[RMDB]
RNA sequence: GGGAACGACUCGAGUAGAGUCGAAAAUUUUGGCCGAUUCUGGCAGCGGACAAUUCGACAAACAGUUCGAGUUUAAACGCGACGACCGAAUUAACGACUGUACCGACGACGCCCGGAUCGACAAAUAGUUCACAUCUCAAUAGCACAACAUGGACAAGAUCCUAGUCACGUUCGCGUGACUAGGAUCAAAAGAAACAACAACAACAAC
Reactivity to 2A3 in 0.01 (KOAc 150mM, MgCl2 10mM, bicine 150mM(pH8.5), 24C), signal-to-noise 1, nucleotides 027 to 156: u100u000u000u090g000g050c060c000g040a020u020u080c080u040g010g000c020a000g030c000g000g080a030c000a120a130u030u010c020g080a010c160a190a250a020c180a080g030u140u030c000g000a020g030u000u030u100a170a180a000c000g030c180g010a010c020g000a000c010c010g000a000a000u050u040a000a130c000g020a000c000u060g000u170a190c010c000g000a140c010g010a040c030g130c000c000c000g000g000a010u010c010g090a050c000a030a060a000u090a030g110u050u020c170a060c000a210u010c000u050c000a120a290u110a060g060c020a000c000a130a210c030a110u250g210g060a060c080a060a130
This 207-nucleotide RNA was probed chemically with 2A3. The data come from the RNA Mapping Database (RMDB), library OK3TST.